[RMDB]
RNA sequence: GGGAACGACUCGAGUAGAGUCGAAAAGAAACGUUAACUUCAGUCGGUCGACGUCUUAACUGGUGCGGAAGACAAUAUCAUGUAAUGCGAUAUGGCGAGUGUUAUGUGACACUGCGGAGUCAGAGAAUCCUCUUGCCUUCUUCGGAAGGCAAGAGGAAAAAGAAACAACAACAACAAC
Reactivity to DMS in 0.01 (KOAc 150mM, MgCl2 10mM, bicine 150mM(pH8.5), 24C), signal-to-noise 1, nucleotides 027 to 126: g000a020a020a060c070g000u010u010a000a070c060u000u000c040a060g000u000c000g020g000u000c120g000a050c020g020u000c050u000u060a080a050c060u000g000g030u000g060c000g000g020a070a020g010a060c060a120a190u080a130u000c130a010u000g040u000a100a050u000g000c000g020a010u000a040u040g050g000c210g000a090g030u000g020u020u000a010u050g040u010g000a020c220a070c070u020g010c010g000g030a220g040u000c000a050g000a170g000a010a140
Reactivity to 2A3 in 0.01 (KOAc 150mM, MgCl2 10mM, bicine 150mM(pH8.5), 24C), signal-to-noise 1, nucleotides 027 to 126: g050a000a100a000c020g000u000u060a040a030c000u120u090c030a050g060u020c000g000g040u030c000g000a000c030g000u000c000u200u060a300a060c040u050g000g000u040g020c040g050g010a000a000g110a160c020a070a070u200a030u090c070a010u020g000u050a020a010u040g010c000g000a000u000a050u150g000g000c000g000a030g020u000g010u010u090a030u300g040u040g000a000c000a000c000u000g030c000g030g010a000g000u020c020a000g060a000g020a120a000